[RMDB]
RNA sequence: GGGAACGACUCGAGUAGAGUCGAAAACAGACCUUUGAGGUGAAGUUGGCGGAUAAUAUCAGCAACAAGUUUGGCGUAUUGUUGCUGCUAAACGUUGUGUUGACUGCGUCCUCGCUGCUGGUGAGCAGCACCCCUCACUAUUCGUAGUGAGGGGUGCAAAAGAAACAACAACAACAAC
Reactivity to 2A3 in 0.01 (KOAc 150mM, MgCl2 10mM, bicine 150mM(pH8.5), 24C), signal-to-noise 5, nucleotides 027 to 126: c030a000g120a130c030c020u080u160u300g110a090g000g020u030g040a070a020g040u100u070g030g000c050g010g040a030u080a170a050u060a110u090c010a000g010c000a000a010c000a010a040g020u060u150u110g130g000c090g010u090a050u020u030g020u000u040g000c000u000g010c030u060a070a060a020c070g030u040u030g000u010g020u030u050g050a100c040u030g000c020g030u020c010c010u020c040g040c010u070g020c000u020g040g030u100g070a030g020c040a010
Reactivity to DMS in 0.01 (KOAc 150mM, MgCl2 10mM, bicine 150mM(pH8.5), 24C), signal-to-noise 4, nucleotides 027 to 126: c100a170g000a080c030c010u000u030u020g020a060g000g010u000g000a050a050g020u020u000g000g020c030g010g000a100u020a060a150u020a080u010c020a020g020c000a020a000c010a000a030g000u010u020u010g010g000c080g030u010a090u000u010g000u000u000g000c010u000g000c100u010a030a110a100c150g030u000u030g020u010g020u000u000g020a040c040u000g000c070g010u000c010c010u020c070g000c020u000g000c030u010g000g000u010g020a180g000c140a100